[RMDB]
RNA sequence: GGGAACGACUCGAGUAGAGUCGAAAAGAAGGGAAAAUAAUGUCAGACUUGAACAAAUGGUCAUCAGCCAUAGAUGUACUUAGAUCACUUGGACUUAAGGUGACUAUUAUUUCUGCGGUUGACACAACUAGGGCACAAGAUGAACAUUGGUGGAUCAGAUCAUAUUCCUAUUCGUAGGAAUAUGAUCAAAAGAAACAACAACAACAAC
Reactivity to DMS in 0.01 (KOAc 150mM, MgCl2 10mM, bicine 150mM(pH8.5), 24C), signal-to-noise 5, nucleotides 027 to 156: g010a100a080g010g010g020a060a060a080a070u000a060a070u000g020u010c030a060g010a100c040u000u010g020a080a070c060a060a060a070u000g020g010u000c040a090u000c070a090g000c020c040a070u010a050g020a060u000g020u000a070c130u000u010a080g010a130u000c010a040c020u000u000g020g030a140c150u000u010a050a060g030g030u000g000a050c020u000a030u000u000a060u000u010u000c000u000g030c050g020g010u000u000g020a050c050a060c040a040a060c050u000a060g010g010g020c050a110c050a060a070g010a110u010g010a090a070c080a110u000u000g010g020u000g000g010a140u010c060a210
Reactivity to 2A3 in 0.01 (KOAc 150mM, MgCl2 10mM, bicine 150mM(pH8.5), 24C), signal-to-noise 2, nucleotides 027 to 156: g060a020a030g040g020g030a030a060a020a070u180a040a060u080g020u030c020a010g030a180c030u070u080g030a080a040c040a060a090a070u080g030g010u030c020a030u010c010a040g010c010c000a030u060a050g070a080u050g020u070a050c080u090u090a040g140a290u050c010a010c060u020u050g070g090a080c040u160u150a120a050g000g000u000g010a000c010u000a010u050u010a030u010u070u000c020u030g020c030g030g010u020u030g020a020c010a000c000a150a080c040u090a040g010g010g000c040a010c010a060a030g020a060u070g020a050a010c020a080u030u080g030g010u040g020g040a030u080c050a040